RNA sequence: GGGAACGACUCGAGUAGAGUCGAAAAGGUAGCCACUUCGGUGGCUACCAAAGAGAUAGUACCUAUUGAGUUCCUGUGUAGGAACUCAUGACAGGAUGUCAAAAACAUGAUUCUUCGGAAUCAUGAACCUAGGUUGAUGGUUCGCCAUCAACCUAGGAAAAGAAACAACAACAACAAC
Reactivity to DMS in 0.01 (KOAc 150mM, MgCl2 10mM, bicine 150mM(pH8.5), 24C), signal-to-noise 2, nucleotides 027 to 126: g010g020u000a000g020c000c010a000c000u000u020c250g020g040u000g020g040c000u000a000c010c000a000a050a040g000a170g010a060u000a080g000u010a130c000c000u010a080u000u000g010a010g000u010u000c000c000u000g000u000g000u050a010g010g000a020a000c000u000c000a000u000g000a150c300a050g000g010a100u020g010u000c020a080a050a060a080a120c000a010u000g000a020u000u000c000u000u020c150g020g010a000a000u010c000a000u000g010a050a100
Reactivity to 2A3 in 0.01 (KOAc 150mM, MgCl2 10mM, bicine 150mM(pH8.5), 24C), signal-to-noise 1, nucleotides 027 to 126: g010g020u010a010g000c000c010a010c000u030u040c130g110g000u000g000g020c000u000a000c000c000a000a000a000g010a000g000a010u050a040g050u090a160c000c000u010a090u060u070g000a000g000u000u000c010c000u050g110u170g210u300a020g000g000a000a010c000u020c000a000u000g020a010c040a020g060g040a020u050g040u060c010a000a070a000a080a010c010a000u000g000a000u050u000c010u040u050c230g170g030a000a020u000c000a010u000g040a020a030
Chemical mapping of a 177-nucleotide RNA with DMS and 2A3. It was measured as part of the RMDB library M2PK50. For DMS, 1,440 sequencing reads were counted. 2A3 adducts were read by reverse transcription with SuperScript II with manganese. Conditions: 150 mM KOAc, 10 mM MgCl2 and 150 mM bicine (pH 8.5), 24 C. The 2A3 profile rests on 1,684 reads.